[RMDB]
RNA sequence: GGGAACGACUCGAGUAGAGUCGAAAAGAUAUGGACAUAGCAAUGAUGGGUCAGUGCAAUAAUUUCGGAAACGAAUAGCACAGACCUUGAGCUAUGUCCUAAGUCAAAACCACGGUUCGCCGUGGAACGAUUCUACCCAGUUCGCUGGGUAGAAUCGAAAAGAAACAACAACAACAAC
Reactivity to DMS in 0.01 (KOAc 150mM, MgCl2 10mM, bicine 150mM(pH8.5), 24C), signal-to-noise 2, nucleotides 027 to 126: g000a020u010a300u000g010g010a000c010a010u000a020g000c000a210a090u040g010a180u000g000g030g010u010c000a100g060u020g000c000a180a130u000a090a130u000u000u000c000g000g000a060a060a160c000g000a010a010u000a120g010c000a010c000a050g010a000c000c010u000u000g000a220g000c010u000a000u000g000u000c010c000u020a000a030g010u010c020a050a030a130a170c000c000a010c010g000g000u000u000c190g000c000c000g060u000g000g000a000a030
Reactivity to 2A3 in 0.01 (KOAc 150mM, MgCl2 10mM, bicine 150mM(pH8.5), 24C), signal-to-noise 2, nucleotides 027 to 126: g020a010u110a020u160g010g000a000c000a010u010a000g000c020a000a300u170g070a110u090g110g050g000u000c030a070g020u000g000c030a040a300u160a250a200u110u070u000c020g000g040a040a050a040c020g000a050a010u050a060g020c000a000c020a020g010a010c010c010u010u010g020a000g000c010u000a000u000g010u000c000c000u000a000a000g000u030c010a000a000a030a130c000c010a010c000g050g000u090u040c300g040c120c000g020u030g010g000a040a030